[RMDB]
RNA sequence: GGGAACGACUCGAGUAGAGUCGAAAAGCCCGGUCUUUGCCCCGGAUCAACUUUAAUAGUUAUGACGGUUUCCGACUCGGGAAAAUAGAUUCUUGCAUAACGACGGAAAUUUCAGAGUUUGUUCUGAAGUGACCUAUAGUUUCGACUAUAGGUCACUAAAAGAAACAACAACAACAAC
Reactivity to DMS in 0.01 (KOAc 150mM, MgCl2 10mM, bicine 150mM(pH8.5), 24C), signal-to-noise 1, nucleotides 027 to 126: g000c010c000c040g000g000u010c010u040u010u000g010c060c170c000c120g000g000a060u030c080a050a000c000u000u000u020a100a070u000a060g000u000u010a060u120g000a130c080g000g000u000u050u020c010c040g000a030c100u020c000g000g020g010a120a040a100a100u030a100g020a180u000u020c060u000u040g030c200a080u000a080a120c060g000a090c090g020g020a090a050a020u040u000u000c080a100g010a110g000u010u000u000g000u030u000c000u000g000a300
Reactivity to 2A3 in 0.01 (KOAc 150mM, MgCl2 10mM, bicine 150mM(pH8.5), 24C), signal-to-noise 2, nucleotides 027 to 126: g070c000c000c000g000g030u000c020u060u110u170g040c010c000c000c000g040g050a040u000c060a000a050c020u030u120u140a170a170u160a180g070u080u050a060u180g020a060c020g020g000u000u020u010c030c010g060a100c160u050c110g000g080g000a090a000a000a000u210a020g080a060u210u050c040u090u090g010c000a060u020a220a010c040g030a000c000g030g100a050a030a060u120u130u060c000a010g000a000g100u010u060u120g010u010u070c000u000g000a040
Chemical mapping of a 177-nucleotide RNA with DMS and 2A3. The DMS profile rests on 1,149 reads. The reactions ran in a buffer of 150 mM KOAc, 10 mM MgCl2 and 150 mM bicine (pH 8.5), at 24 C. It was measured as part of the RMDB library RFM100.